Structure probing data (2A3 and DMS) for a 177-nucleotide construct. The data come from the RNA Mapping Database (RMDB), library TTRDEL. High DMS reactivity at an A or C suggests that its Watson-Crick edge is free. For 2A3 the reverse transcriptase was SuperScript II with manganese.

RNA sequence: GGGAACGACUCGAGUAGAGUCGAAAAGAUAUGGAUCUUCGUCUUUUGACGACGUCUAACUCGGAAACGAGUAAUCGUCGAUAAGACGGGAUCCUAAGUCAAACCUUUAGCCUUCGGGCUAAAGGAACACUGGACCUGAGUUCGCUCAGGUCCAGUGAAAAGAAACAACAACAACAAC
Reactivity to 2A3 in 0.01 (KOAc 150mM, MgCl2 10mM, bicine 150mM(pH8.5), 24C), signal-to-noise 2, nucleotides 027 to 126: g020a030u040a030u150g050g000a020u030c020u300u300c090g020u020c010u000u060u070u280g290a150c050g010a010c000g040u080c150u190a210a120c000u030c000g000g000a040a020a000c000g010a000g000u020a010a040u070c010g000u000c030g130a110u050a220a010g000a020c030g000g010g010a000u000c000c000u000a020a010g040u030c000a130a050a300c010c000u000u000u000a010g010c000c020u030u060c300g110g000g000c000u000a010a010a010g000g000a000a000
Reactivity to DMS in 0.01 (KOAc 150mM, MgCl2 10mM, bicine 150mM(pH8.5), 24C), signal-to-noise 1, nucleotides 027 to 126: g000a030u000a260u010g010g010a000u000c020u020u040c010g030u000c000u010u000u000u000g000a080c050g000a010c110g010u050c180u010a120a020c000u010c000g000g010a120a070a120c000g010a000g000u010a130a090u000c000g020u000c000g000a030u000a000a020g030a000c010g000g000g000a000u000c000c000u010a010a040g000u010c030a100a100a170c000c000u000u000u000a000g000c020c000u000u000c210g030g010g010c000u000a000a000a000g010g040a020a100